[RMDB]
RNA sequence: GGGAACGACUCGAGUAGAGUCGAAAAGAUAUGGAACCGAUGGCCUUCGCGAAGAACUCGGAAACGAGGGAGCGAAGGAACUACCAUUCGGUUCCUAAGUCAAAAGGUGGCUGUUCGCAGCCACCAACCAUAAAACUCGGUUCGCCGAGUUUUAUGGAAAAGAAACAACAACAACAAC
Reactivity to DMS in 0.01 (KOAc 150mM, MgCl2 10mM, bicine 150mM(pH8.5), 24C), signal-to-noise 2, nucleotides 027 to 126: g000a060u010a300u000g000g000a010a030c000c010g010a050u000g000g020c000c000u000u000c000g020c000g010a110a120g030a130a200c010u000c000g000g000a120a060a180c000g010a000g010g030g000a090g010c000g010a020a000g040g010a030a000c040u010a300c030c010a000u000u000c010g020g000u010u000c020c000u000a000a060g000u010c030a140a100a130a130g000g000u000g010g010c020u000g010u000u010c280g030c000a010g000c000c000a000c000c010a000a010
Reactivity to 2A3 in 0.01 (KOAc 150mM, MgCl2 10mM, bicine 150mM(pH8.5), 24C), signal-to-noise 1, nucleotides 027 to 126: g020a020u050a050u160g000g000a020a020c020c040g000a010u010g000g060c000c010u030u010c020g000c030g150a300a120g030a080a020c000u000c000g020g030a070a060a040c020g000a020g030g000g020a030g000c000g000a020a010g000g010a000a000c020u090a030c000c000a050u110u200c030g000g010u010u000c000c000u010a000a010g010u020c010a000a020a080a150g000g000u000g010g000c000u030g040u100u130c300g020c140a000g000c000c000a000c000c000a010a000